[RMDB]
Overview: The record gives the reactivity of an RNA of 177 nucleotides to DMS and 2A3. For DMS the reverse transcriptase was MarathonRT. High 2A3 reactivity points to a flexible backbone, as in loops and unpaired stretches.
RNA sequence: GGGAACGACUCGAGUAGAGUCGAAAACAAGUUUGAAACUUGAAGAAAUUGACGGAAGGACACCACAAGGAGUGGAGUGUGCGGGUUAAUUUGACUCAACGCGGGAAAACUUACCCGGGCAGGCGAUCUAGUACAUGGUCUUCGGACCAUGUACUAGAAAAGAAACAACAACAACAAC
Reactivity to DMS in 0.01 (KOAc 150mM, MgCl2 10mM, bicine 150mM(pH8.5), 24C), signal-to-noise 1, nucleotides 027 to 126: c030a010a030g000u000u000u090g000a120a100a120c130u000u000g000a090a090g000a050a120a060u000u010g040a000c030g000g030a140a180g020g020a050c100a080c000c000a060c000a120a100g000g000a300g000u000g040g000a070g020u000g000u000g040c110g000g010g050u000u010a080a050u000u000u000g000a090c060u030c010a040a070c100g000c150g020g000g050a040a030a090a070c220u000u000a030c000c010c030g000g000g000c040a070g010g000c120g000a090u000
Reactivity to 2A3 in 0.01 (KOAc 150mM, MgCl2 10mM, bicine 150mM(pH8.5), 24C), signal-to-noise 3, nucleotides 027 to 126: c000a000a000g070u050u090u150g210a160a070a000c000u000u000g050a080a040g030a070a120a030u080u060g030a010c040g060g030a040a090g050g020a010c010a010c040c040a040c020a130a110g180g030a090g090u030g050g000a090g070u130g020u030g030c050g020g050g020u020u050a040a070u110u060u130g000a060c040u000c030a020a010c070g040c030g090g020g070a020a130a000a030c040u050u050a070c020c010c020g030g020g000c000a020g000g040c000g030a000u000
The data come from the RNA Mapping Database (RMDB), library RFM100. Values cover nucleotides 27 to 126.